[RMDB]
RNA sequence: GGGAACGACUCGAGUAGAGUCGAAAAGAUUCGGCGGCCCUGUCAUGAGGCCGAAACGAAGGCACGUACCCCUCCGAAUGGCGUCGGGGAGUCAGCGGCUAUAUAUGCGCCUAAUGCUGGCAUCCGGGAGAACCCUCAUCCUUCGGGAUGAGGGUAAACGAGUACAUUGGUUCGCCAAUGUACUCGUAAAAGAAACAACAACAACAAC
Reactivity to 2A3 in 0.01 (KOAc 150mM, MgCl2 10mM, bicine 150mM(pH8.5), 24C), signal-to-noise 1, nucleotides 027 to 156: g030a060u020u000c010g060g000c000g010g030c060c020c020u030g150u050c130a130u080g050a030g030g030c030c010g020a020a000a000c040g110a020a030g030g060c070a000c110g090u110a080c020c010c010c010u000c020c000g080a080a000u050g060g000c080g010u080c030g010g020g000g010a120g010u000c000a020g010c030g000g040c050u010a010u020a000u000a020u300g060c040g020c050c000u170a220a040u300g010c000u000g000g010c010a040u000c000c010g000g000g000a130g040a040a030c000c000c000u000c000a000u000c000c000u000u020c150g130g010g000a000u000g000a000g020g020g000u000a010a010
Reactivity to DMS in 0.01 (KOAc 150mM, MgCl2 10mM, bicine 150mM(pH8.5), 24C), signal-to-noise 1, nucleotides 027 to 156: g000a140u010u000c040g000g020c020g030g020c010c000c000u000g020u000c290a140u000g000a060g020g030c000c010g010a010a030a080c000g030a040a080g000g000c040a140c050g040u000a300c050c060c000c000u010c010c050g020a100a110u030g010g010c050g060u000c060g010g000g010g020a110g000u000c060a060g050c040g000g020c040u000a160u000a140u040a090u000g000c040g030c050c010u000a050a130u010g030c020u000g000g010c000a110u000c010c040g000g000g000a230g000a070a090c000c000c070u000c000a000u000c010c010u000u000c300g070g000g000a010u000g010a000g000g000g000u010a010a030